[RMDB]
RNA sequence: GGGAACGACUCGAGUAGAGUCGAAAAGCAACGCAAUGCCGCGGCAAGUGGAGUUAGCGAGAAGAGACUAGGCUUUGGUUUCUUCAAGUGAAGCGGUCACCAAUCAGGUGUGGUAGUUACCGUAAAAAUAACCGCUCUUUGUUCGCAAAGAGCGGAACUAACUGAGUUAGUUCGCUAACUCAGUUAGAAAAGAAACAACAACAACAAC
Reactivity to DMS in 0.01 (KOAc 150mM, MgCl2 10mM, bicine 150mM(pH8.5), 24C), signal-to-noise 3, nucleotides 027 to 156: g030c020a090a050c040g020c030a070a090u000g010c000c020g000c070g020g040c080a060a110g030u010g010g010a110g010u000u000a290g030c030g010a300g000a040a020g010a060g010a000c010u000a080g020g020c160u000u000u000g020g010u010u010u000c000u000u000c010a030a300g020u010g000a100a150g030c010g020g000u010c020a030c020c020a040a110u000c080a110g020g040u000g010u010g010g040u000a030g010u000u000a040c030c000g020u010a010a080a060a070a100u000a110a170c000c010g000c000u000c000u010u000u000g010u020u000c300g010c020a010a010a010g000a030g050c000g010g010a000a020
Reactivity to 2A3 in 0.01 (KOAc 150mM, MgCl2 10mM, bicine 150mM(pH8.5), 24C), signal-to-noise 8, nucleotides 027 to 156: g050c020a030a050c050g020c060a040a060u070g030c000c020g010c020g040g010c060a100a060g040u080g060g060a100g030u140u090a020g020c030g020a030g000a060a000g010a000g010a010c020u030a020g090g150c080u160u150u150g010g000u020u010u010c000u000u010c010a020a020g020u040g060a070a020g010c010g000g040u020c010a010c010c020a020a110u180c060a060g050g040u070g020u050g090g030u050a080g030u070u090a050c010c030g030u070a050a060a030a010a030u130a080a070c000c000g010c000u000c000u010u000u010g040u030u060c160g000c110a000a000a000g000a000g000c000g000g000a000a000
This 207-nucleotide RNA was probed chemically with DMS and 2A3. The reactions ran in a buffer of 150 mM KOAc, 10 mM MgCl2 and 150 mM bicine (pH 8.5), at 24 C. For 2A3 the reverse transcriptase was SuperScript II with manganese. For DMS the reverse transcriptase was MarathonRT.